[RMDB]
Annotation
This 207-nucleotide RNA was probed chemically with DMS and 2A3. As a SHAPE reagent, 2A3 marks flexible, mostly unpaired nucleotides at the ribose 2'-OH. The DMS profile rests on 2,145 reads. For 2A3, 892 sequencing reads were counted. Conditions: 150 mM KOAc, 10 mM MgCl2 and 150 mM bicine (pH 8.5), 24 C.

RNA sequence: GGGAACGACUCGAGUAGAGUCGAAAACGUGGCCAACAUGGUGAAACCCUCUCUCUACUAAAAAUAGAAAAACUAGCCAGGUGUGGUGGCACAUGCCAAUAAUCCCAGCUACUUCAUCUGAGGUCAGGAGUUCAAGACCAGCCUGGCCAAUAUGGCAAUACUCCUCCUGAUUCGUCAGGAGGAGUAUAAAAGAAACAACAACAACAAC
Reactivity to DMS in 0.01 (KOAc 150mM, MgCl2 10mM, bicine 150mM(pH8.5), 24C), signal-to-noise 1, nucleotides 027 to 156: c090g010u000g010g000c000c020a000a240c040a030u000g020g000u000g000a040a020a070c040c010c030u000c090u000c040u000c000u000a000c000u020a060a060a010a130a050u000a080g010a030a030a010a070a070c050u000a120g000c010c000a040g000g030u000g060u000g000g000u010g010g000c020a130c060a040u000g020c000c050a040a090u000a060a110u000c010c000c000a040g050c040u010a040c030u020u000c040a140u000c040u020g000a170g020g010u010c020a080g020g010a200g010u010u000c010a030a140g010a070c010c040a080g000c020c000u010g020g000c010c010a040a030u010a150u000g020g000c030a180
Reactivity to 2A3 in 0.01 (KOAc 150mM, MgCl2 10mM, bicine 150mM(pH8.5), 24C), signal-to-noise 1, nucleotides 027 to 156: c120g000u040g010g040c020c000a020a020c070a210u070g070g000u040g000a110a030a040c010c000c000u010c000u000c000u000c000u020a050c030u090a070a070a050a120a120u150a030g070a040a130a090a000a030c040u040a040g070c020c000a020g060g000u030g000u000g020g030u000g020g000c000a060c000a090u150g000c010c000a000a090u100a050a000u050c000c010c000a010g000c010u000a000c010u010u060c000a050u040c000u030g040a040g030g020u040c040a010g010g010a000g020u100u140c140a190a010g020a080c000c000a000g060c030c020u020g010g030c000c000a010a010u080a080u090g010g000c000a020